[RMDB]
Chemical mapping of a 207-nucleotide RNA with 2A3 and DMS. Values are in units of 0.01, from 0 to 300, in steps of 10. Reactivities are given for positions 27 through 156. In probing experiments dimethyl sulfate is read out at A N1 and C N3, which are open when not base-paired. For 2A3, 2,347 sequencing reads were counted. For 2A3 the reverse transcriptase was SuperScript II with manganese. For DMS, 4,588 sequencing reads were counted. The data come from the RNA Mapping Database (RMDB), library M2RFPK.
RNA sequence: GGGAACGACUCGAGUAGAGUCGAAAACCAGAUGACGGUCCUGCCAUGAGACCGCAACGUGAGCAUGUCGCAUCGAAUGGACUCGGGGAGUCGGCAGCUUGCCCCACGGAUGAGCGCCUAAUGCCGGAAGAGACGUGCAACUUCGGUUGCACGUCAACAUAUGGAGGGUGUUCGCACCCUCCAUAUGAAAAGAAACAACAACAACAAC
Reactivity to 2A3 in 0.01 (KOAc 150mM, MgCl2 10mM, bicine 150mM(pH8.5), 24C), signal-to-noise 3, nucleotides 027 to 156: c010c000a030g050a160u110g060a060c050g000g030u050c010c020u020g130c060c050a110u130g020a040g050a090c050c050g020c060a040a040c050g070u050g010a030g020c060a070u080g020u070c030g000c050a040u020c050g070a010a040u090g060g040a010c040u000c150g010g000g030g010a040g060u040c030g020g000c010a000g030c020u070u180g040c000c000c020c010a040c030g000g050a090u090g040a030g050c030g000c020c020u090a110a070u080g040c040c010g010g010a070a020g070a030g000a050c010g000u000g000c000a000a000c000u030u050c170g060g000u000u000g000c000a030c000g000u000c000a000a000
Reactivity to DMS in 0.01 (KOAc 150mM, MgCl2 10mM, bicine 150mM(pH8.5), 24C), signal-to-noise 2, nucleotides 027 to 156: c020c030a200g030a130u000g020a090c000g010g010u010c030c000u000g030c030c160a060u010g040a120g000a060c020c070g000c020a050a040c090g030u010g010a090g020c050a090u050g000u000c010g020c020a120u000c020g000a110a300u010g000g000a020c030u000c010g020g000g020g000a160g020u000c030g010g000c050a060g000c050u000u010g040c040c010c000c080a100c070g000g020a130u000g000a120g000c010g010c030c040u010a040a090u000g010c000c010g040g020a060a160g000a170g010a000c000g040u000g000c010a000a010c020u010u000c300g000g020u000u010g030c000a010c030g010u000c000a030a040